[RMDB]
RNA sequence: GGGAACGACUCGAGUAGAGUCGAAAAUUCGAGUGCCCAAAUGGGGUGAGUGAAACCACAUCUGAAAACGCAUUAGCUAGAGCAAUGUCAUAUUACAUGAUGUUGGGUGCAACUCCAGAAGUUAUGAACUCGGGACGAGUUUCGACUCGUCCCGAGUAAAAGAAACAACAACAACAAC
Reactivity to DMS in 0.01 (KOAc 150mM, MgCl2 10mM, bicine 150mM(pH8.5), 24C), signal-to-noise 1, nucleotides 027 to 126: u010u000c090g000a140g000u010g040c000c040c000a090a070a120u000g030g020g000g020u050g000a040g000u030g000a090a120a140c000c020a040c000a000u010c000u000g010a050a000a050a170c300g000c000a010u000u000a250g020c010u010a100g030a130g040c010a010a000u000g000u040c040a110u010a130u010u040a170c170a090u000g000a000u020g000u000u000g020g020g000u000g020c070a260a020c030u030c020c000a100g020a050a170g000u050u000a170u000g000a130
Reactivity to 2A3 in 0.01 (KOAc 150mM, MgCl2 10mM, bicine 150mM(pH8.5), 24C), signal-to-noise 1, nucleotides 027 to 126: u150u080c070g050a000g000u060g030c000c000c000a000a090a070u160g110g040g000g030u040g000a300g030u080g080a210a000a120c010c000a000c000a020u000c000u030g090a070a040a000a000c000g030c010a030u030u020a070g060c060u100a080g070a010g190c010a010a000u040g060u090c020a010u050a140u300u130a060c050a020u150g000a000u020g020u230u050g000g010g000u080g000c040a010a040c000u040c010c000a020g030a090a030g070u140u290a120u170g030a040